RNA sequence: GGGAACGACUCGAGUAGAGUCGAAAAAGUCAGAGGGCGCUACCAUGCAAACUAGUGCUGGCUACUCUUGCACAGAAUCACAUCUCGAUAAUUGUCAGUGCAAGAAGGACAAUUAUACCAUUUAAUGAAAACGUUUACCUGUUCGCAGGUAAACGAACUACAGCUCUUACUUCGGUAAGAGCUGUAGAAAAGAAACAACAACAACAAC
Reactivity to 2A3 in 0.01 (KOAc 150mM, MgCl2 10mM, bicine 150mM(pH8.5), 24C), signal-to-noise 4, nucleotides 027 to 156: a000g030u030c020a020g010a050g050g030g030c020g030c020u070a190c080c060a060u130g030c040a090a040a050c030u070a050g060u050g140c040u010g000g010c020u020a050c000u020c000u000u010g000c000a000c000a000g090a090a080u130c040a030c010a210u060c050u070c120g070a030u020a020a040u020u010g010u010c010a000g010u000g010c010a000a000g000a000a030g020g000a000c000a020a000u040u000a040u030a090c040c040a100u110u140u180a130a140u180g080a060a050a010a010c000g000u000u010u000a000c000c000u010g020u010u080c230g020c060a000g000g010u000a000a000a000c010g000a000a000
Reactivity to DMS in 0.01 (KOAc 150mM, MgCl2 10mM, bicine 150mM(pH8.5), 24C), signal-to-noise 1, nucleotides 027 to 156: a090g020u000c020a080g040a140g000g010g010c040g010c020u000a030c050c060a080u000g020c120a110a070a090c100u000a100g000u000g070c000u010g020g000c020u000a150c020u010c010u000u000g080c000a130c000a170g020a110a170u010c080a040c080a190u000c120u010c040g000a060u000a000a010u000u000g000u000c020a250g040u010g020c000a050a080g000a150a140g020g000a020c040a050a030u000u000a080u000a270c070c060a120u020u020u010a100a080u000g000a120a040a090a170c000g020u000u000u000a000c000c010u020g000u000u000c300g040c000a020g000g010u010a000a020a020c000g010a000a080